[RMDB]
RNA sequence: GGGAACGACUCGAGUAGAGUCGAAAACAUGCAUGUCUCUAGAUCUAGGACCAUGCGAUCCUAGCUGUCGUGACAGCGAUCUCCAUGGAUGACACUAGACGAUCCAUGGAGCGUCAUGGUGCCAUGGCACUUUUGCCCGAUUCGUCGGGCAAAAGUGAAAAGAAACAACAACAACAAC
Reactivity to DMS in 0.01 (KOAc 150mM, MgCl2 10mM, bicine 150mM(pH8.5), 24C), signal-to-noise 4, nucleotides 027 to 126: c130a080u000g010c040a040u000g010u000c010u000c030u000a060g010a100u010c090u000a050g010g000a040c050c030a110u010g010c110g010a090u000c020c020u000a050g010c130u010g010u000c090g040u000g000a050c020a000g000c080g000a070u020c040u000c000c000a010u000g010g010a030u000g010a190c120a190c220u010a130g010a110c120g000a030u010c000c010a010u000g000g000a000g010c250g000u010c030a080u000g010g000u010g010c040c020a060u000g010g010
Reactivity to 2A3 in 0.01 (KOAc 150mM, MgCl2 10mM, bicine 150mM(pH8.5), 24C), signal-to-noise 4, nucleotides 027 to 126: c040a030u180g010c030a070u040g020u000c010u000c030u140a070g030a290u070c060u080a030g000g020a000c050c030a130u120g030c040g060a090u020c000c020u000a020g000c040u020g020u090c030g060u090g030a010c010a010g050c010g050a090u050c000u000c020c000a000u000g010g000a010u050g070a040c060a040c240u140a110g070a170c090g050a040u000c000c010a030u040g000g040a010g010c010g000u030c020a060u120g090g000u070g070c030c040a040u050g080g000